[RMDB]
RNA sequence: GGGAACGACUCGAGUAGAGUCGAAAACGGGGCCAUCACGUCGAUGGACGGACCCGCUACGGCGGACACGAUCAUCAACACCCUCUCCGCCAGGGUGGAUCAGGCACAGCGUUUCGCGCAGCAGCUCGCACAGCUGAAGAAGAAGGGCGUGCGUAGCGUCCCUACCAACUUUCGAGUUGGUAGGGACAAAAGAAACAACAACAACAAC
Reactivity to 2A3 in 0.01 (KOAc 150mM, MgCl2 10mM, bicine 150mM(pH8.5), 24C), signal-to-noise 2, nucleotides 027 to 156: c030g000g000g010g000c000c000a020u030c020a000c150g280u200c150g070a050u080g090g000a010c030g010g110a000c010c000c010g040c020u050a010c090g010g000c050g020g050a010c050a010c200g100a170u140c030a060u010c060a040a060c000a020c000c000c010u000c020u020c000c010g000c030c010a000g040g000g000u010g000g030a050u080c030a000g130g000c030a000c020a080g090c030g040u050u130u160c100g000c000g000c010a030g030c000a010g030c030u120c070g000c000a070c030a170g000c040u060g060a080a010g100a060a000g080a040a070g080g010g010c000g010u000g020c000g050u060a020g000c000

This 207-nucleotide RNA was probed chemically with 2A3. The data come from the RNA Mapping Database (RMDB), library OK3TST.